Background: The record gives the reactivity of an RNA of 177 nucleotides to 2A3 and DMS. Reactivities are given for positions 27 through 126. The reactions ran in a buffer of 150 mM KOAc, 10 mM MgCl2 and 150 mM bicine (pH 8.5), at 24 C. The DMS profile rests on 1,611 reads.
RNA sequence: GGGAACGACUCGAGUAGAGUCGAAAAGAUAUGGAAUUAUGAUCCCUCUAGGCGAAGAACUCGGAAACGAGGGAGCCUAGGAGGGACAAUGUAAUUCCUAAGUCAAAGAACGCGUUCGCGCGUUCAAGAUGCAAAUAUGCUUCGGCAUAUUUGCAUCAAAAGAAACAACAACAACAAC
Reactivity to 2A3 in 0.01 (KOAc 150mM, MgCl2 10mM, bicine 150mM(pH8.5), 24C), signal-to-noise 2, nucleotides 027 to 126: g010a000u080a060u170g010g000a010a010u010u000a020u060g300a120u040c040c000c000u000c000u010a000g010g000c040g300a300a030g000a150a070c000u000c000g020g050a060a040a040c000g000a000g000g040g000a010g000c010c000u030a040g000g070a050g000g000g000a000c000a000a000u040g010u000a000a000u000u000c000c000u010a160a040g070u060c070a120a070a140g000a000a000c010g020c010g030u050u090c280g000c010g000c010g110u010u010c000a010a010
Reactivity to DMS in 0.01 (KOAc 150mM, MgCl2 10mM, bicine 150mM(pH8.5), 24C), signal-to-noise 2, nucleotides 027 to 126: g000a020u020a300u000g000g000a030a010u000u000a010u000g000a080u000c010c000c010u000c000u000a000g000g030c000g040a080a170g000a160a180c000u000c000g010g000a140a090a260c010g000a060g010g000g010a070g010c000c010u000a020g010g000a030g020g010g000a000c020a020a040u000g000u010a010a010u000u000c010c000u010a050a170g010u000c040a070a150a160g010a000a010c000g010c000g030u000u010c240g020c010g020c000g010u000u000c000a080a130